Source: RMDB library TTRDES, as collected in RNAgym. An RNA of 177 nucleotides, treated with 2A3 and DMS and read out base by base. The RNA was probed in 150 mM KOAc, 10 mM MgCl2 and 150 mM bicine (pH 8.5) at 24 C. For 2A3 the reverse transcriptase was SuperScript II with manganese.
[RMDB]
RNA sequence: GGGAACGACUCGAGUAGAGUCGAAAAGAUAUGGAGCGGUGUCUUUUGACGUACAUCAGUAUCUCGGAAACGAGAUAUGUACGAUAAGACAACGCUCCUAAGUCAAAAGGGCUCGUUCGCGAGCCCACAGGAAGAUCAACUUCGGUUGAUCUUCCUGAAAAGAAACAACAACAACAAC
Reactivity to 2A3 in 0.01 (KOAc 150mM, MgCl2 10mM, bicine 150mM(pH8.5), 24C), signal-to-noise 2, nucleotides 027 to 126: g010a010u040a020u160g030g000a000g030c020g000g010u000g000u040c030u080u210u150u250g250a150c110g000u040a000c020a060u180c040a110g190u070a040u020c000u000c000g040g000a040a040a020c010g000a020g000a010u010a030u050g010u020a000c010g070a120u080a230a020g000a000c000a010a000c010g000c010u000c000c000u000a010a000g010u000c010a000a020a040a210g000g000g000c010u000c010g040u140u120c300g020c000g160a020g000c000c000c000a010
Reactivity to DMS in 0.01 (KOAc 150mM, MgCl2 10mM, bicine 150mM(pH8.5), 24C), signal-to-noise 2, nucleotides 027 to 126: g000a050u000a300u010g020g000a000g010c000g000g000u000g000u000c000u000u010u010u010g030a190c170g010u010a000c000a160u040c300a300g000u000a020u000c000u000c010g010g000a080a100a220c020g000a010g010a010u000a000u000g000u000a010c000g030a190u000a050a010g000a040c010a010a030c020g000c010u000c000c020u000a000a070g000u010c030a100a080a180a100g000g000g050c000u000c000g000u000u000c160g020c010g030a010g000c000c000c010a010